[RMDB]
RNA sequence: GGGAACGACUCGAGUAGAGUCGAAAAGGAUAGUAGUUCGCUACUAUCCAAAAGAUCUAUGAAAAUAGAUCAAAAAUGGUGGUGGUCACCAAAGAGCAAAAAAAACACAUAGCUUCGGCUAUGUGAAGUCUAAGAUAUGGUUCGCCAUAUCUUAGACAAAAGAAACAACAACAACAAC
Reactivity to 2A3 in 0.01 (KOAc 150mM, MgCl2 10mM, bicine 150mM(pH8.5), 24C), signal-to-noise 4, nucleotides 027 to 126: g000g000a010u000a000g000u000a000g000u020u040c180g020c070u010a000c000u000a000u000c000c000a000a000a000a010g000a000u000c000u000a020u020g020a020a040a020a010u020a000g010a000u010c010a010a100a030a020a020u040g000g010u020g010g090u090g050g090u190c010a010c000c010a020a080a010g120a020g000c040a040a030a060a060a030a010a050a020c010a000c000a000u000a000g010c000u040u050c300g100g000c000u010a000u010g000u000g010a040a010
Reactivity to DMS in 0.01 (KOAc 150mM, MgCl2 10mM, bicine 150mM(pH8.5), 24C), signal-to-noise 3, nucleotides 027 to 126: g010g000a000u000a010g000u000a010g010u000u020c260g020c000u000a010c010u000a010u000c010c000a040a050a080a120g000a010u000c000u000a010u010g000a120a080a110a020u000a000g000a000u000c000a030a040a090a110a080u010g010g020u000g020g020u010g010g000u000c020a040c020c020a040a070a100g020a130g010c130a000a000a000a070a060a070a080a160c010a010c000a010u000a000g010c000u000u000c220g030g010c000u000a000u010g020u000g010a020a050